[RMDB]
An RNA of 207 nucleotides, treated with DMS and 2A3 and read out base by base. Reactivities are rounded to 0.1 and cut off at 0 and 3. The data come from the RNA Mapping Database (RMDB), library M2RFPK. The RNA was probed in 150 mM KOAc, 10 mM MgCl2 and 150 mM bicine (pH 8.5) at 24 C. The DMS profile rests on 2,095 reads.

RNA sequence: GGGAACGACUCGAGUAGAGUCGAAAACGUUUACGCCUUCUUUACCGUUAUCAAGGAAGGUACUCGGCCAUGCUAAGGGAAGCAUUAUUCCUUAGGCGCAUGUCGCCGCCAGCAUGGUGUGAGGGGAAAAAGUAUGCUGGGUUCGCCCAGCAUACAAGGAUGGUAAUGACUUCGGUCAUUACCAUCCAAAAGAAACAACAACAACAAC
Reactivity to DMS in 0.01 (KOAc 150mM, MgCl2 10mM, bicine 150mM(pH8.5), 24C), signal-to-noise 1, nucleotides 027 to 156: c030g030u000u010u010a040c020g020c000c000u000u020c000u000u000u000a040c070c060g000u000u000a000u000c140a020a010g000g060a050a050g040g010u000a000c000u000c000g000g010c030c010a050u000g030c010u010a160a140g050g030g030a050a060g000c170a220u000u000a150u000u000c000c000u000u010a090g010g050c000g080c050a130u010g030u010c000g060c000c000g010c050c100a050g060c000a020u000g020g040u000g000u000g030a060g000g010g020g000a050a050a110a080a180g000u010a000u000g000c030u010g040g030g030u000u000c300g000c000c020c000a030g020c000a010u000a000c000a080a130
Reactivity to 2A3 in 0.01 (KOAc 150mM, MgCl2 10mM, bicine 150mM(pH8.5), 24C), signal-to-noise 3, nucleotides 027 to 156: c000g010u010u050u100a070c050g000c000c020u020u020c020u040u080u100a300c140c000g180u110u100a140u140c050a010a010g000g010a010a010g000g030u040a040c010u010c000g040g000c000c010a020u030g000c000u040a120a160g000g030g020a040a010g050c110a230u080u140a170u210u040c010c010u050u120a080g000g000c020g000c050a100u220g150u300c040g000c030c000g000c010c020a000g000c000a000u000g030g010u070g120u140g040a010g010g050g000g020a030a030a030a030a030g000u000a000u000g000c000u000g010g000g020u010u050c080g150c050c000c000a000g000c000a000u000a000c000a000a010